[RMDB]
RNA sequence: GGGAACGACUCGAGUAGAGUCGAAAAAGCGGCUCAGUUACGACUGAGCCGCAAUGACUGAUGAAAUUAAUUGGUCCGUGUUUAUGAAUUUAUAUUGAUUAAAAACCUUCCAAUUACUGAGCAAAAACUUCCUACUAGUAUUCGUACUAGUAGGAAGAAAAGAAACAACAACAACAAC
Reactivity to 2A3 in 0.01 (KOAc 150mM, MgCl2 10mM, bicine 150mM(pH8.5), 24C), signal-to-noise 5, nucleotides 027 to 126: a000g000c000g010g000c010u000c000a000g000u030u050a060c160g030a050c110u000g000a000g030c000c000g020c000a000a010u010g010a010c040u050g060a060u080g070a160a030a110u110u040a000a050u010u050g020g020u020c020c070g060u090g070u230u050u020a080u120g040a050a030u040u180u020a180u060a120u150u280g030a040u060u110a040a070a000a000a000c010c010u030u010c030c000a000a000u010u020a050c070u110g090a030g120c060a010a030a040a040a050
Reactivity to DMS in 0.01 (KOAc 150mM, MgCl2 10mM, bicine 150mM(pH8.5), 24C), signal-to-noise 2, nucleotides 027 to 126: a110g010c000g000g010c000u010c000a000g000u000u010a130c180g000a080c000u000g000a010g010c020c010g000c010a000a000u020g010a120c030u030g000a090u030g000a080a100a080u000u000a010a040u000u000g000g010u000c070c070g050u010g020u000u000u000a020u020g000a180a020u000u010u060a140u050a100u060u020g010a070u010u000a010a010a020a010a010c010c030u010u000c010c010a020a030u010u000a000c190u000g000a130g010c140a080a060a090a110a090